[RMDB]
RNA sequence: GGGAACGACUCGAGUAGAGUCGAAAAUUCCAUUUGAGUAUCCUGAAAACGGGCUUUUCAGCAUGGAACGUACAUAUUAAAUAGUAGGAGUGCAUAGUGGCCCGUAUCGCAGGCAUUAACAUUCCUGAAAACGUGAAAAGGUUCGCCUUUUCACGAAUCUAGUGUGUAUCUUCGGAUACACACUAGAAAAAGAAACAACAACAACAAC
Reactivity to DMS in 0.01 (KOAc 150mM, MgCl2 10mM, bicine 150mM(pH8.5), 24C), signal-to-noise 3, nucleotides 027 to 156: u000u010c020c020a110u000u010u010g010a170g020u010a080u000c010c000u000g000a060a040a060a130c020g030g030g030c050u000u030u010u000c050a250g000c090a060u010g010g030a080a050c030g010u000a130c070a100u000a140u000u010a100a070a250u010a100g010u000a100g010g000a220g010u000g010c030a060u010a170g020u000g020g000c010c000c010g000u000a030u000c100g010c040a040g010g030c050a040u000u000a070a080c050a130u000u010c010c020u000g020a090a030a070a160c010g020u000g000a020a000a010a010g030g010u000u010c300g020c020c010u000u000u000u000c010a010c000g010a030a020
Reactivity to 2A3 in 0.01 (KOAc 150mM, MgCl2 10mM, bicine 150mM(pH8.5), 24C), signal-to-noise 3, nucleotides 027 to 156: u070u000c010c000a050u140u030u050g040a030g030u090a040u090c010c000u010g010a010a000a050a030c000g000g010g000c020u140u100u120u090c060a020g000c000a010u030g060g070a160a070c040g070u060a010c010a030u140a090u190u300a140a100a110u130a070g070u010a010g000g150a040g030u000g000c070a080u080a170g060u050g020g010c000c020c010g000u000a000u000c010g000c000a000g000g020c010a000u020u040a030a030c000a020u040u110c000c010u010g090a110a110a050a060c000g000u000g010a000a000a000a000g010g020u010u040c160g080c000c000u010u000u000u000c000a000c000g000a000a000